The record gives the reactivity of an RNA of 177 nucleotides to 2A3 and DMS. The data come from the RNA Mapping Database (RMDB), library M2PK50. The RNA was probed in 150 mM KOAc, 10 mM MgCl2 and 150 mM bicine (pH 8.5) at 24 C. DMS adducts were read by reverse transcription with MarathonRT.
[RMDB]
RNA sequence: GGGAACGACUCGAGUAGAGUCGAAAAGUACCCUUGUUCGCAAGGGUACAAAGACAGACUUCACUGUCAUAAAGUAGGUAACAUCUCAGUUACAAUAAGAGAAAAGCACCUACUUCGGUAGGUGCAAUCCUAUGAUUUACUUCGGUAAAUCAUAGGAAAAAGAAACAACAACAACAAC
Reactivity to 2A3 in 0.01 (KOAc 150mM, MgCl2 10mM, bicine 150mM(pH8.5), 24C), signal-to-noise 3, nucleotides 027 to 126: g000u000a010c010c010c010u000u000g030u030u060c180g000c110a000a000g020g020g000u000a000c000a000a000a010g010a000c010a010g020a020c010u110u040c250a020c150u050g000u010c000a010u180a040a220a040g220u210a050g120g080u010a000a000c020a090u090c070u040c170a050g020u030u020a010c050a060a080u210a160a060g130a000g070a000a130a020a000g010c000a000c000c010u020a010c000u030u010c160g070g000u000a000g000g000u010g000c000a000a000
Reactivity to DMS in 0.01 (KOAc 150mM, MgCl2 10mM, bicine 150mM(pH8.5), 24C), signal-to-noise 5, nucleotides 027 to 126: g010u000a000c000c000c000u010u000g010u020u010c220g030c000a010a000g010g010g030u000a010c000a020a070a110g010a000c000a010g010a200c150u000u000c150a120c000u000g010u010c000a130u010a080a080a120g010u010a090g010g010u000a010a020c010a090u000c080u010c090a140g000u000u000a010c020a090a070u010a080a120g010a140g010a070a080a130a100g000c000a000c000c000u000a010c000u000u010c120g020g000u010a000g000g010u010g010c000a010a020